The record gives the reactivity of an RNA of 177 nucleotides to 2A3 and DMS. For DMS, 799 sequencing reads were counted. The reactions ran in a buffer of 150 mM KOAc, 10 mM MgCl2 and 150 mM bicine (pH 8.5), at 24 C. For DMS the reverse transcriptase was MarathonRT.
[RMDB]
RNA sequence: GGGAACGACUCGAGUAGAGUCGAAAACGAUCGAUCUAGACUAGGACGUACUAGCGCUACUAGUGACGAUCCUAGCUACUAGGGAUCAGCCAUGCUCACUAGUACUCGCAUGAUCACGUACGUACAGGGCGGAAGUACUGUUCGCAGUACUUCCGCCAAAAGAAACAACAACAACAAC
Reactivity to 2A3 in 0.01 (KOAc 150mM, MgCl2 10mM, bicine 150mM(pH8.5), 24C), signal-to-noise 1, nucleotides 027 to 126: c050g020a060u050c060g010a020u050c020u080a020g140a200c000u010a000g030g030a010c010g000u000a000c000u040a010g000c100g070c110u030a070c000u000a010g030u120g080a050c100g010a040u000c010c000u000a000g050c030u070a050c010u040a000g060g030g000a010u010c020a000g000c000c020a060u050g020c000u010c010a020c060u030a030g040u000a030c060u030c020g000c030a100u150g050a050u110c040a000c190g020u040a030c010g000u010a010c070a110g000
Reactivity to DMS in 0.01 (KOAc 150mM, MgCl2 10mM, bicine 150mM(pH8.5), 24C), signal-to-noise 1, nucleotides 027 to 126: c060g000a070u000c030g010a100u050c070u000a150g010a110c040u000a050g000g010a060c000g020u000a030c030u000a040g000c130g010c300u000a070c000u000a000g000u000g030a040c060g000a140u000c000c000u000a020g010c110u030a020c030u000a130g000g020g000a020u000c030a160g000c060c060a030u000g020c180u000c020a010c050u000a000g010u000a040c140u000c070g000c100a100u000g010a040u000c180a030c050g010u000a020c160g000u000a120c190a130g020